RNA sequence: GGGAACGACUCGAGUAGAGUCGAAAAGUAUACUUGUGUUGUCAAUUUUUGAAGAUGACUGUUUUCCGUUCACCUUUUGAAUUACUUAGACAAAUUAACACAAAUGUAGAAUUUGGCACUCUCACACUAUCUCCAAAAGGUUCGCCUUUUGGAGAUAAAAAGAAACAACAACAACAAC
Reactivity to DMS in 0.01 (KOAc 150mM, MgCl2 10mM, bicine 150mM(pH8.5), 24C), signal-to-noise 2, nucleotides 027 to 126: g000u020a060u000a010c020u000u000g010u000g000u010u000g010u000c000a070a050u000u010u000u000u000g000a060a050g000a010u000g000a010c050u000g000u010u000u030u020c200c070g000u000u000c020a020c020c000u000u000u020u010g010a030a020u010u000a080c240u000u000a150g010a060c040a050a060a130u010u010a060a130c010a050c030a010a020a040u000g000u000a030g000a060a120u000u000u000g030g000c180a080c110u000c050u010c100a090c160a100c280
Reactivity to 2A3 in 0.01 (KOAc 150mM, MgCl2 10mM, bicine 150mM(pH8.5), 24C), signal-to-noise 2, nucleotides 027 to 126: g010u010a020u030a090c010u030u040g000u010g000u080u080g010u010c030a060a080u030u090u060u110u120g010a030a030g000a020u050g010a010c040u030g100u090u190u150u040c050c030g040u100u050c010a010c020c000u000u050u080u070g060a020a010u090u020a130c090u050u150a060g010a020c020a050a200a270u160u140a230a000c010a000c000a080a070a060u160g010u000a020g070a140a020u100u060u020g070g000c060a010c100u060c000u000c020a060c010a010c060
Conditions: 150 mM KOAc, 10 mM MgCl2 and 150 mM bicine (pH 8.5), 24 C. Structure probing data (DMS and 2A3) for a 177-nucleotide construct. Reactivities are given for positions 27 through 126. The 2A3 profile rests on 882 reads. DMS adducts were read by reverse transcription with MarathonRT.